[RMDB]
RNA sequence: GGGAACGACUCGAGUAGAGUCGAAAACGAUUCGUGAGGGAGAAGGGCCUCCGCGCCGGCGACACCAUAGUCUUCUCCCGCUCGGCGUACGGCCCCGACAAGCUGCUCUUCAUCGACUGCAAGAAGAAAACACCAUCCAAUUCGUUGGAUGGUGUUUAAAAGAAACAACAACAACAAC
Reactivity to 2A3 in 0.01 (KOAc 150mM, MgCl2 10mM, bicine 150mM(pH8.5), 24C), signal-to-noise 2, nucleotides 027 to 126: c040g030a060u070u050c030g030u060g080a080g020g030g010a070g060a050a030g050g040g020c010c030u070c080c100g000c010g020c000c000g040g010c040g030a020c020a030c130c050a130u130a150g080u030c040u050u040c010u090c020c040c010g000c000u050c000g000g000c030g020u030a050c050g000g000c000c010c020c000g030a060c010a030a050g080c040u110g030c010u000c000u080u000c000a060u070c030g030a040c080u090g000c010a020a070g090a090a010g070a010
Reactivity to DMS in 0.01 (KOAc 150mM, MgCl2 10mM, bicine 150mM(pH8.5), 24C), signal-to-noise 4, nucleotides 027 to 126: c120g000a160u000u000c030g030u000g010a070g010g000g010a090g010a090a080g000g000g020c020c010u000c170c130g010c050g020c030c010g010g010c020g000a130c160a120c150c100a090u000a090g000u000c010u000u010c020u000c050c060c010g000c010u010c030g020g000c020g010u000a120c230g010g020c000c000c000c050g020a100c200a060a110g010c090u010g000c050u000c020u000u010c050a060u010c070g000a060c100u000g010c090a080a090g000a050a050g000a090

This 177-nucleotide RNA was probed chemically with 2A3 and DMS. The reactions ran in a buffer of 150 mM KOAc, 10 mM MgCl2 and 150 mM bicine (pH 8.5), at 24 C. The DMS profile rests on 2,978 reads. Values cover nucleotides 27 to 126. Source: RMDB library OK2TRN, as collected in RNAgym.